[RMDB]
RNA sequence: GGGAACGACUCGAGUAGAGUCGAAAAACGCUCUUGGCCUCGUCCGCGCAGCAGCCGACGGGCGCUGUCGCCAACGGCCAUGCCGGCGCCGAUGCAGGGCCGCCGCCGCUGCUGCAGUCUCUGGCAGUAAGCGAGAUAGUUUCGACUAUCUCGCUUAAAAAGAAACAACAACAACAAC
Reactivity to DMS in 0.01 (KOAc 150mM, MgCl2 10mM, bicine 150mM(pH8.5), 24C), signal-to-noise 2, nucleotides 027 to 126: a080c120g030c070u020c040u000u010g020g020c020c020u000c030g000u000c030c230g010c090g010c020a060g020c040a060g040c060c010g010a080c130g010g020g010c020g010c100u000g000u010c060g030c100c040a070a140c070g000g040c000c070a130u000g010c080c070g020g000c160g000c070c080g000a080u010g020c100a040g020g010g030c040c030g010c070c050g000c050c120g010c010u010g000c010u000g020c040a080g020u000c040u020c030u000g000g010c040a100g000
Reactivity to 2A3 in 0.01 (KOAc 150mM, MgCl2 10mM, bicine 150mM(pH8.5), 24C), signal-to-noise 1, nucleotides 027 to 126: a020c030g000c030u060c040u070u090g030g020c010c010u040c060g050u020c010c050g000c000g000c050a030g000c010a030g070c050c050g040a160c150g050g010g020c030g020c070u040g020u100c060g020c010c030a030a030c050g020g010c030c010a080u110g030c040c030g080g020c030g070c060c040g050a050u080g010c060a020g070g070g000c050c040g060c060c010g030c000c000g000c060u050g000c010u030g110c000a000g070u010c030u000c000u170g030g000c000a030g080

An RNA of 177 nucleotides, treated with DMS and 2A3 and read out base by base. Source: RMDB library OK2TRN, as collected in RNAgym. The reactions ran in a buffer of 150 mM KOAc, 10 mM MgCl2 and 150 mM bicine (pH 8.5), at 24 C. DMS adducts were read by reverse transcription with MarathonRT.